An RNA of 177 nucleotides, treated with DMS and 2A3 and read out base by base. Conditions: 150 mM KOAc, 10 mM MgCl2 and 150 mM bicine (pH 8.5), 24 C. DMS adducts were read by reverse transcription with MarathonRT. It was measured as part of the RMDB library TTRINS. For 2A3, 4,720 sequencing reads were counted.
RNA sequence: GGGAACGACUCGAGUAGAGUCGAAAAGAUAUGGAGAGGUGAGCCUUGGAUUUAUGGGAUAACUUUGACUAUAUUCGGAAACGAAUAUAGUCAAAGACCCAUUGUCAGGCUCUCCUCUCCUAAGUCACAAUCUUAAAUGCUUCGGCAUUUAAGAUUGAAAAGAAACAACAACAACAAC
Reactivity to DMS in 0.01 (KOAc 150mM, MgCl2 10mM, bicine 150mM(pH8.5), 24C), signal-to-noise 2, nucleotides 027 to 126: g000a050u000a300u000g000g000a020g000a020g000g000u000g000a010g000c000c000u000u030g020g030a020u000u000u000a000u010g010g000g000a120u010a130a100c000u000u000u000g000a020c000u000a000u000a000u000u000c010g010g010a150a120a280c010g010a000a000u000a000u000a000g010u000c000a000a000a000g000a140c000c010c000a000u000u000g010u000c010a030g000g010c000u010c000u000c000c000u010c000u000c000c000u000a000a060g020u000c040a300
Reactivity to 2A3 in 0.01 (KOAc 150mM, MgCl2 10mM, bicine 150mM(pH8.5), 24C), signal-to-noise 2, nucleotides 027 to 126: g000a020u090a050u230g000g010a010g040a000g040g000u030g000a000g030c020c040u140u250g220g000a060u300u300u160a000u040g000g040g020a040u100a300a150c000u010u020u000g020a010c000u010a000u000a010u000u020c010g000g040a080a060a090c000g000a020a000u020a000u000a010g020u000c010a010a000a000g000a010c000c010c000a000u000u010g010u000c010a000g010g000c010u000c000u000c000c000u000c000u000c000c000u000a000a000g000u000c000a000